[RMDB]
Structure probing data (2A3 and DMS) for a 177-nucleotide construct. Conditions: 150 mM KOAc, 10 mM MgCl2 and 150 mM bicine (pH 8.5), 24 C. The 2A3 profile rests on 1,548 reads.
RNA sequence: GGGAACGACUCGAGUAGAGUCGAAAAGAAAGAAAGCGUAUGAUGCGCUUGCCAGCCCCCGUGUGGCCUGCUUUUCGCGGCGGCGGCGUGCGGUUUUUCCGCACCUGAAUCACUUCCCGGUUAAGAAGAUACUAAGCGCUUUCGAGCGCUUAGUAUCAAAAGAAACAACAACAACAAC
Reactivity to 2A3 in 0.01 (KOAc 150mM, MgCl2 10mM, bicine 150mM(pH8.5), 24C), signal-to-noise 3, nucleotides 027 to 126: g110a020a090a020g070a030a040a000g000c010g000u080a110u300g220a070u220g050c000g010c000u000u000g020c000c010a040g000c010c000c010c010c000g010u010g010u040g110g050c040c010u110g050c070u090u100u060u130c030g000c010g010g010c000g010g000c030g010g000c010g010u010g000c000g000g130u070u090u070u220u090c000c040g000c030a000c000c010u040g110a060a070u050c030a000c100u000u000c000c000c000g020g000u110u030a100a060g050a110a000
Reactivity to DMS in 0.01 (KOAc 150mM, MgCl2 10mM, bicine 150mM(pH8.5), 24C), signal-to-noise 3, nucleotides 027 to 126: g000a050a180a070g010a060a010a030g000c000g040u000a080u050g030a130u040g010c000g020c030u000u000g010c050c030a090g010c000c000c090c020c080g000u010g010u000g010g000c010c050u000g010c030u000u010u030u000c050g020c070g010g030c300g000g000c050g010g010c040g000u000g010c000g030g000u010u000u010u000u020c000c000g000c000a010c010c010u010g010a180a070u010c070a040c110u010u010c000c010c000g000g000u010u020a120a160g030a160a190